[RMDB]
RNA sequence: GGGAACGACUCGAGUAGAGUCGAAAACGAUGGAGUGUAACGGCGCGAAGACCGCACUGUGAGCGCUUCGGAGUUCUCCCGUGCUGAACUCGCCGCCGCCUUCGAGAAGUUCGAGAAGACCGUGGCCCAGUACACUAGACUUCGGUCUAGUGUACUGAAAAGAAACAACAACAACAAC
Reactivity to 2A3 in 0.01 (KOAc 150mM, MgCl2 10mM, bicine 150mM(pH8.5), 24C), signal-to-noise 9, nucleotides 027 to 126: c020g010a030u080g020g010a030g030u070g010u080a070a010c010g020g010c000g010c010g050a100a040g160a150c080c040g000c010a010c030u030g030u060g060a100g120c020g000c030u060u050c050g050g040a050g000u040u000c030u010c010c000c000g020u060g020c050u100g020a090a060c020u020c110g030c020c010g000c010c010g000c020c000u010u020c010g040a070g030a150a090g100u150u120c040g020a020g020a080a020g020a030c020c030g020u020g020g010c000c010
Reactivity to DMS in 0.01 (KOAc 150mM, MgCl2 10mM, bicine 150mM(pH8.5), 24C), signal-to-noise 6, nucleotides 027 to 126: c030g000a300u060g000g010a040g010u010g030u010a210a100c000g000g010c060g000c010g010a170a120g000a270c190c070g010c000a010c010u010g010u040g010a070g010c050g000c020u000u000c070g010g020a290g000u010u020c120u000c000c000c100g020u030g010c070u000g000a030a090c100u000c080g000c050c000g000c020c080g010c040c010u020u000c000g000a180g010a090a170g020u020u010c020g000a230g000a040a050g000a070c030c140g000u010g010g000c010c190
Structure probing data (2A3 and DMS) for a 177-nucleotide construct. The 2A3 profile rests on 12,967 reads. The reactions ran in a buffer of 150 mM KOAc, 10 mM MgCl2 and 150 mM bicine (pH 8.5), at 24 C. For DMS the reverse transcriptase was MarathonRT. Reactivities are rounded to 0.1 and cut off at 0 and 3.